The record gives the reactivity of an RNA of 207 nucleotides to 2A3. It was measured as part of the RMDB library OK3TST.
RNA sequence: GGGAACGACUCGAGUAGAGUCGAAAAAGUUGUACUGGUGUGGAUAACGUACGGAAACCAUCCAGACAACCACCAUUAUCCAUCCGAAACGUACGGGACGCCUACAGAGCACAUCAUGAACAUAGAAUUGCUUACGCCCAUCCGAAACGUACGCGUACGCGUCCGAUCACUUCGGUGAUCGGACGCGAAAAGAAACAACAACAACAAC
Reactivity to 2A3 in 0.01 (KOAc 150mM, MgCl2 10mM, bicine 150mM(pH8.5), 24C), signal-to-noise 1, nucleotides 027 to 156: a050g000u000u010g050u120a300c000u020g010g000u130g000u010g150g090a200u080a220a020c050g000u160a000c030g110g000a090a240a000c000c020a000u000c000c000a000g000a000c000a000a000c020c000a020c010c010a110u190u020a080u030c060c030a020u000c080c000g000a160a000a000c090g030u020a050c000g000g000g020a080c070g070c000c000u130a120c090a030g030a030g130c040a070c000a040u110c050a050u040g090a170a000c010a080u060a050g160a060a060u000u020g010c000u020u000a010c030g040c030c000c030a010u060c030c000g070a030a070a050c010g020u050a000c020g040c000g070u170a050

Values cover nucleotides 27 to 156. For 2A3 the reverse transcriptase was SuperScript II with manganese.